Source: RMDB library VIROID, as collected in RNAgym. An RNA of 177 nucleotides, treated with DMS and 2A3 and read out base by base. For 2A3 the reverse transcriptase was SuperScript II with manganese. For DMS the reverse transcriptase was MarathonRT. The DMS profile rests on 1,652 reads. Conditions: 150 mM KOAc, 10 mM MgCl2 and 150 mM bicine (pH 8.5), 24 C.
RNA sequence: GGGAACGACUCGAGUAGAGUCGAAAAGAUGUCUCCCAAGAAGGCCAAAAGAGAAUACAAGAGUCGGAAGCUUUCCCCAUAACGCUGGAGACAUCUCGGAAGGGGAAAGAGGACAGAUGGAAGAGAACAUGCGUAGUAAGUUCGCUUACUACGCAUGAAAAGAAACAACAACAACAAC
Reactivity to DMS in 0.01 (KOAc 150mM, MgCl2 10mM, bicine 150mM(pH8.5), 24C), signal-to-noise 3, nucleotides 027 to 126: g000a030u000g020u000c020u000c000c010c240a140a110g010a090a090g020g010c030c100a050a060a110a090g000a110g000a120a070u010a100c150a040a160g010a070g010u000c030g000g010a100a140g010c020u000u000u010c010c010c000c060a100u010a060a100c190g010c150u010g000g000a040g020a010c040a020u010c000u010c060g000g010a080a060g000g000g000g010a000a020a010g000a060g000g000a070c080a040g020a100u000g010g020a080a090g000a090g010a090a120
Reactivity to 2A3 in 0.01 (KOAc 150mM, MgCl2 10mM, bicine 150mM(pH8.5), 24C), signal-to-noise 2, nucleotides 027 to 126: g000a000u020g000u010c010u020c060c000c020a010a050g100a010a000g060g020c010c020a000a030a000a160g190a010g060a120a010u160a180c090a130a050g010a040g160u050c070g090g040a060a040g030c000u000u010u000c000c000c000c000a050u120a140a020c060g040c130u060g000g000a020g010a010c010a030u000c030u030c040g080g060a130a070g000g020g010g000a000a070a040g030a020g010g000a010c040a050g090a050u100g070g070a080a000g060a010g000a100a050